[RMDB]
RNA sequence: GGGAACGACUCGAGUAGAGUCGAAAAACGUUGAUAUGGAUUUACUCCGAGGAGACGAACUACCACGAACAGGGGAAUCUCUACCCGUGGCGUCUCCGUUUGACGAGUAAGUCCUACGUCAACAUGCAACCUUCAGCGUUCGCGCUGAAGAAAAGAAACAACAACAACAAC
Reactivity to DMS in 0.01 (KOAc 150mM, MgCl2 10mM, bicine 150mM(pH8.5), 24C), signal-to-noise 5, nucleotides 027 to 129: a090c170g010u000u020g010a030u030a230u090g010g010a040u030u000u020a010c020u030c010c110g010a040g020g000a030g000a030c000g000a070a040c210u000a270c050c010a030c020g020a000a170c120a060g000g010g010g000a270a180u230c040u040c020u060a080c170c050c040g030u100g000g040c000g040u030c000u010c010c000g000u080u020u060g040a120c300g030a000g010u010a010a040g010u000c010c010u010a040c000g010u000c020a040a010c020a080u020g020c070a100a030c070
Reactivity to 2A3 in 0.01 (KOAc 150mM, MgCl2 10mM, bicine 150mM(pH8.5), 24C), signal-to-noise 7, nucleotides 027 to 129: a000c060g000u000u010g010a010u020a010u110g000g000a000u000u000u000a000c000u000c000c010g010a040g010g000a010g020a000c000g010a070a060c100u170a070c090c000a000c000g060a160a030c050a140g030g030g000g080a130a250u110c040u000c010u070a060c010c010c000g000u000g010g010c000g000u000c000u000c000c000g010u060u060u070g010a010c000g000a000g010u000a000a000g000u000c010c010u010a000c010g010u000c000a010a000c000a000u090g030c010a030a080c010